[RMDB]
RNA sequence: GGGAACGACUCGAGUAGAGUCGAAAAGAAUAAGUUUUCUUAUUCUUAAUAAAAACCUACGUAGAUGGUGAACAGACAGAAUUUUCUGCUUCUGGACACCUUAGGCUCAGAAGAUUGCUACUUGCGAACCUGAAAGUCAUUUCGAUGACUUUCAGGUAAAAGAAACAACAACAACAAC
Reactivity to DMS in 0.01 (KOAc 150mM, MgCl2 10mM, bicine 150mM(pH8.5), 24C), signal-to-noise 2, nucleotides 027 to 126: g000a010a000u000a000a000g000u010u000u010u050c060u000u000a000u000u010c000u020u000a160a100u060a160a060a080a170a050c000c000u000a090c170g000u020a160g030a060u010g000g060u000g000a010a150c030a000g000a020c000a010g020a010a270u040u060u070u010c090u040g000c220u030u020c000u000g000g000a300c010a000c000c040u000u010a040g010g020c060u000c170a090g000a120a110g000a040u040u000g020c000u000a020c080u000u000g020c040g000a090
Reactivity to 2A3 in 0.01 (KOAc 150mM, MgCl2 10mM, bicine 150mM(pH8.5), 24C), signal-to-noise 1, nucleotides 027 to 126: g010a000a000u000a000a000g000u040u120u140u190c000u000u000a000u000u000c000u000u020a050a020u110a070a020a010a000a010c010c000u040a050c080g060u070a050g040a180u070g000g010u010g010a040a000c010a000g020a010c040a020g070a220a220u150u050u110u070c010u030g030c030u040u000c000u000g010g000a000c000a000c000c000u000u030a040g010g000c000u010c070a080g020a260a020g020a130u080u240g060c010u020a080c040u060u120g010c000g050a070